[RMDB]
RNA sequence: GGGAACGACUCGAGUAGAGUCGAAAAACGGUGGAUACGUCCACCGAAGCCCGUGAUGGCAUGAAUCUUUGAGACCUGAGAAUUUUCUUCCUUGAUGAAAGAUCACAAGCAUUAUCCCUGAGGGCAAAGUUUCAAUUGUCUUCGGACAAUUGAAACUAAAAGAAACAACAACAACAAC
Reactivity to 2A3 in 0.01 (KOAc 150mM, MgCl2 10mM, bicine 150mM(pH8.5), 24C), signal-to-noise 4, nucleotides 027 to 126: a000c000g000g000u010g000g000a010u020a040c200g060u020c000c010a010c000c000g010a020a000g050c000c000c000g000u100g040a130u100g040g030c020a040u070g040a110a110u070c050u020u040u050g060a120g050a110c010c010u060g020a080g050a230a130u140u130u050u040c030u020u070c000c020u040u080g020a100u080g070a070a040a020g030a010u030c000a000c010a070a030g030c010a030u010u080a090u160c000c020c000u050g040a060g010g030g010c070a070a070
Reactivity to DMS in 0.01 (KOAc 150mM, MgCl2 10mM, bicine 150mM(pH8.5), 24C), signal-to-noise 1, nucleotides 027 to 126: a100c000g000g080u140g010g030a190u000a090c110g030u030c000c000a000c070c000g000a020a020g000c000c000c000g000u030g020a160u000g000g000c040a050u020g000a250a020u000c020u000u030u040g000a060g020a020c010c030u000g000a070g010a100a030u070u000u000u010c140u010u000c090c070u000u000g000a120u000g000a020a070a070g000a070u000c000a000c190a030a170g060c010a160u020u000a060u000c020c000c000u000g010a120g030g000g020c030a100a050